[RMDB]
RNA sequence: GGGAACGACUCGAGUAGAGUCGAAAAUGGAGGACGUGCUAUCGCUAACGCUGUUGGUGCCAGUGCGUUAGGUUUUGAUAGCCAUGCUAAGGGAAUCAACAGUACAACUGUGGGGACACAAAGCGUCGCGAAAAUCCGCUUUCGAGCGGAUUUUCGCAAAAGAAACAACAACAACAAC
Reactivity to 2A3 in 0.01 (KOAc 150mM, MgCl2 10mM, bicine 150mM(pH8.5), 24C), signal-to-noise 1, nucleotides 027 to 126: u070g000g010a000g030g060a000c040g050u090g020c000u000a000u000c000g000c080u000a000a010c000g000c030u030g080u250u060g190g100u100g060c010c020a090g100u030g110c030g000u000u000a110g180g000u010u000u160u270g000a000u000a000g000c010c010a080u100g000c000u020a090a080g010g000g050a180a210u000c100a000a000c000a090g010u120a110c010a170a010c120u000g000u010g000g000g000g020a030c020a000c000a060a100a040g250c030g040u040c020
Chemical mapping of a 177-nucleotide RNA with 2A3. Conditions: 150 mM KOAc, 10 mM MgCl2 and 150 mM bicine (pH 8.5), 24 C. For 2A3, 441 sequencing reads were counted.